[RMDB]
RNA sequence: GGGAACGACUCGAGUAGAGUCGAAAAUAUGUCAUUUGGUGUGCGUACAUCAGGUGGCACAACUUUCUCUAUGUCGCAACAUAGUGGAAGUGAACUCAGUGCUGUACGCACAGUUCUGAGUGACCUUUGCUACUGUAGCGACAGUAGUAAAGAAGUACGAGUCGACUCUGUUCGCAGAGUCGAUUCGAAAAGAAACAACAACAACAAC
Reactivity to DMS in 0.01 (KOAc 150mM, MgCl2 10mM, bicine 150mM(pH8.5), 24C), signal-to-noise 3, nucleotides 027 to 156: u010a030u000g000u000c000a040u000u000u010g030g020u010g030u000g030c230g040u010a030c000a030u000c010a030g010g040u010g020g000c010a030c050a140a070c020u000u000u000c010u010c010u000a020u000g020u010c300g030c270a150a230c060a030u000a010g000u000g010g000a010a050g010u000g000a110a060c010u000c040a140g020u000g000c010u000g020u010a100c230g040c150a090c000a030g000u000u020c020u000g010a040g010u000g010a100c250c010u000u000u000g010c010u000a000c010u000g000u000a150g020c190g020a230c000a020g010u000a020g010u000a000a030a020g010a070a050g020u000a120
Reactivity to 2A3 in 0.01 (KOAc 150mM, MgCl2 10mM, bicine 150mM(pH8.5), 24C), signal-to-noise 8, nucleotides 027 to 156: u300a080u060g010u010c010a000u010u010u010g040g000u010g010u040g090c150g080u170a010c000a020u030c020a020g050g040u030g030g000c040a010c020a030a040c000u020u040u020c020u000c000u020a020u010g040u040c090g020c140a070a030c000a030u010a000g010u020g070g020a020a000g010u030g060a020a010c010u010c040a030g020u000g020c000u010g020u060a070c090g020c100a010c010a010g000u050u030c000u010g010a000g000u030g040a060c000c000u020u000u000g010c000u000a030c050u020g020u050a050g100c050g100a020c000a000g000u010a000g000u000a010a040a030g040a040a010g030u050a040
Structure probing data (DMS and 2A3) for a 207-nucleotide construct. For 2A3, 14,100 sequencing reads were counted. The DMS profile rests on 8,930 reads. 2A3 adducts were read by reverse transcription with SuperScript II with manganese. Reactivities are given for positions 27 through 156. Source: RMDB library OK3TST, as collected in RNAgym.